[RMDB]
RNA sequence: GGGAACGACUCGAGUAGAGUCGAAAAGCUGCCUCUGACGUCCUUAAGGGUGGUAAAGCGGGUCUCCCCCGGAAACUGGGGCGCGCCUGGCGCUAGCACGGGUAUGCGUGGUGGUCGACCCUGGCCGCCACCGAUAUGACUUCGGUCAUAUCGGUGGAAAAGAAACAACAACAACAAC
Reactivity to DMS in 0.01 (KOAc 150mM, MgCl2 10mM, bicine 150mM(pH8.5), 24C), signal-to-noise 4, nucleotides 027 to 126: g010c040u010g000c020c010u000c030u010g000a110c090g010u000c020c030u000u000a150a170g010g000g020u000g010g020u010a020a100a130g010c050g000g010g010u000c050u010c040c030c010c000c040g000g000a050a080a110c080u000g010g000g010g000c070g020c110g020c020c030u000g000g000c020g010c060u010a070g010c050a050c080g010g010g010u000a080u010g030c050g020u000g010g010u000g000g010u010c030g010a120c050c020c040u000g010g000c040c040g000
Reactivity to 2A3 in 0.01 (KOAc 150mM, MgCl2 10mM, bicine 150mM(pH8.5), 24C), signal-to-noise 1, nucleotides 027 to 126: g020c020u030g000c020c010u020c050u040g050a040c040g040u020c010c020u080u150a130a160g070g000g000u090g010g020u110a100a070a000g040c030g030g020g000u000c030u040c000c000c010c000c000g060g020a090a060a020c050u070g000g030g000g020c020g010c030g000c000c030u020g080g000c010g020c060u050a020g020c040a030c070g080g040g030u130a050u220g030c030g010u030g060g080u040g020g010u050c040g070a180c010c000c000u010g010g000c030c010g000

The record gives the reactivity of an RNA of 177 nucleotides to DMS and 2A3.
Reactivities are given for positions 27 through 126.
DMS adducts were read by reverse transcription with MarathonRT.